Conditions: 150 mM KOAc, 10 mM MgCl2 and 150 mM bicine (pH 8.5), 24 C. The record gives the reactivity of an RNA of 207 nucleotides to 2A3 and DMS. The DMS profile rests on 8,132 reads.
RNA sequence: GGGAACGACUCGAGUAGAGUCGAAAAGCUUAAUAACCUGCGCUGAGCCCUUCUCCCCCAGCUUGCCUGUGUCCUAGGGAAUUGGAAGGUCAUCCUUUACAGGAUCGUGUGGAAGUCCUGCUCGGGGUCCAAACAUGGUAAUUCGUUACCAUGUUAACAGUUUUAGUAAGUUCGCUUACUAAAACUGAAAAGAAACAACAACAACAAC
Reactivity to 2A3 in 0.01 (KOAc 150mM, MgCl2 10mM, bicine 150mM(pH8.5), 24C), signal-to-noise 3, nucleotides 027 to 156: g030c050u130u130a130a030u130a230a160c010c030u060g040c080g000c060u070g030a040g020c000c020c000u070u040c060u050c010c010c010c000c000a000g000c010u010u050g040c000c010u030g000u000g030u100c020c010u030a030g040g040g010a090a070u060u080g040g040a050a000g020g010u040c020a040u050c020c010u050u110u030a060c030a020g010g010a030u030c020g040u050g010u050g120g030a040a010g020u020c000c000u000g020c010u010c020g020g000g000g010u000c040c040a040a010a020c000a000u000g000g000u010a010a020u040u030c020g000u000u000a010c000c000a010u000g000u000u000a010a000
Reactivity to DMS in 0.01 (KOAc 150mM, MgCl2 10mM, bicine 150mM(pH8.5), 24C), signal-to-noise 3, nucleotides 027 to 156: g020c030u000u000a080a120u000a110a100c030c020u010g020c050g040c050u000g000a110g010c030c020c030u000u010c050u000c020c000c000c020c030a110g000c030u000u000g000c030c030u010g000u000g000u000c040c050u000a090g000g030g010a070a120u000u000g010g010a070a100g010g020u000c050a100u000c010c030u010u010u000a120c070a060g010g010a030u010c050g030u000g030u000g010g000a140a130g010u000c020c010u010g000c030u000c050g010g000g020g020u010c040c020a090a020a020c000a000u000g010g000u010a000a080u000u010c300g030u020u000a010c000c000a000u000g000u000u000a040a220